[RMDB]
The record gives the reactivity of an RNA of 207 nucleotides to 2A3.
For 2A3, 555 sequencing reads were counted.
For 2A3 the reverse transcriptase was SuperScript II with manganese.
The data come from the RNA Mapping Database (RMDB), library VIROID.
RNA sequence: GGGAACGACUCGAGUAGAGUCGAAAACCUGGAGAGGUCUUCUGCCCUAGCCCGGUCUUCGAAGCUUCCUUUGGCUACUACCCGGUGGAAACAACUGAAGCUUCAACGCCUUUUUUUCCAAUCUUCUUUAGCACCGGGCUAGGGAGUAAGCCCGUGGCAUCCGUUACCAGUUCGCUGGUAACGGAUGAAAAGAAACAACAACAACAAC
Reactivity to 2A3 in 0.01 (KOAc 150mM, MgCl2 10mM, bicine 150mM(pH8.5), 24C), signal-to-noise 1, nucleotides 027 to 156: c000c000u020g010g100a200g000a050g020g030u070c020u020u010c020u060g300c010c000c000u000a000g000c020c000c000g000g000u040c030u190u090c220g000a000a000g010c010u010u000c010c030u060u000u070g080g000c000u000a000c000u050a100c000c000c160g000g010u040g020g070a270a220a020c000a000a000c010u000g000a000a000g050c000u010u000c010a020a040c050g150c030c000u050u110u090u070u000u040u050c050c040a180a220u090c040u300u040c020u060u300u210a040g000c100a000c000c000g000g000g010c010u000a000g000g000g000a000g000u000a010a000g020c000c000c010g000u020g120g020